Annotation: An RNA of 177 nucleotides, treated with DMS and 2A3 and read out base by base. Source: RMDB library TTRDES, as collected in RNAgym. For DMS the reverse transcriptase was MarathonRT. 2A3 adducts were read by reverse transcription with SuperScript II with manganese. The DMS profile rests on 1,276 reads.
[RMDB]
RNA sequence: GGGAACGACUCGAGUAGAGUCGAAAAAAAAGAUAUGGACUAAGCUAUAAUCAUAACAUCGUCGUUUGACGAUCCUCGGAAACGAGGAUCCGAGACGUUGUUAUGGUAGCUUAGUCCUAAGUCAAAAUCAGGAUUAAGUGUUCGCACUUAAUCCUGAAAAAGAAACAACAACAACAAC
Reactivity to DMS in 0.01 (KOAc 150mM, MgCl2 10mM, bicine 150mM(pH8.5), 24C), signal-to-noise 2, nucleotides 027 to 126: a080a040a030a080g020a060u010a300u000g000g000a020c000u000a000a000g020c010u010a070u000a300a070u020c010a010u000a000a000c000a020u000c000g030u010c000g000u010u020u020g010a290c300g000a000u000c020c010u000c010g000g000a170a140a160c020g010a010g010g010a010u000c000c000g000a060g000a000c000g010u000u020g000u000u010a000u000g010g010u010a000g000c000u000u010a010g000u000c000c000u000a010a040g000u000c050a030a060a090a170
Reactivity to 2A3 in 0.01 (KOAc 150mM, MgCl2 10mM, bicine 150mM(pH8.5), 24C), signal-to-noise 1, nucleotides 027 to 126: a010a020a030a060g050a070u100a060u110g000g000a010c010u000a000a000g000c000u030a050u120a290a290u300c000a010u010a000a020c000a000u000c000g030u000c010g010u100u300u300g040a030c000g000a030u020c000c000u010c000g040g040a040a080a040c000g000a010g010g000a020u000c000c000g040a050g000a000c010g000u000u000g000u000u010a010u000g000g000u000a000g000c000u000u000a000g000u000c000c000u000a010a000g040u000c000a000a000a000a170